[RMDB]
RNA sequence: GGGAACGACUCGAGUAGAGUCGAAAACAUUUGCAUCUUUCAGGUUGCACAACACAAAAAAAGCGGAGGAUCUCAAGGGGUACCUAGGUGCUCUGCUCCACCUGGAGUCCUUCUUUCCAUUUGGAGAAUGCCUGUGUAACUUCGGUUACACAGGCAUAAAAGAAACAACAACAACAAC
Reactivity to DMS in 0.01 (KOAc 150mM, MgCl2 10mM, bicine 150mM(pH8.5), 24C), signal-to-noise 1, nucleotides 027 to 126: c110a230u020u010u010g000c000a050u000c010u020u020u090c270a010g000g050u000u020g040c050a040c220a050a050c040a020c210a000a000a050a050a060a060a100g050c070g000g070a030g000g000a020u010c050u000c260a130a010g000g000g020g050u050a060c050c010u030a030g000g040u000g000c000u060c000u000g000c020u000c030c010a080c000c010u000g050g000a130g000u000c100c130u000u000c010u000u060u000c000c040a160u000u000u020g000g020a140g020a090
Reactivity to 2A3 in 0.01 (KOAc 150mM, MgCl2 10mM, bicine 150mM(pH8.5), 24C), signal-to-noise 3, nucleotides 027 to 126: c020a050u160u130u160g010c020a060u000c040u050u250u070c070a050g090g100u070u060g020c020a000c100a090a060c060a050c150a020a060a000a000a000a030a000g070c000g020g010a010g000g000a090u010c010u070c180a010a040g000g000g010g060u090a110c030c030u040a050g010g000u060g000c000u020c050u060g010c020u020c000c020a060c000c010u030g000g000a020g050u100c000c040u090u040c000u040u030u010c030c030a160u070u020u250g080g030a100g060a070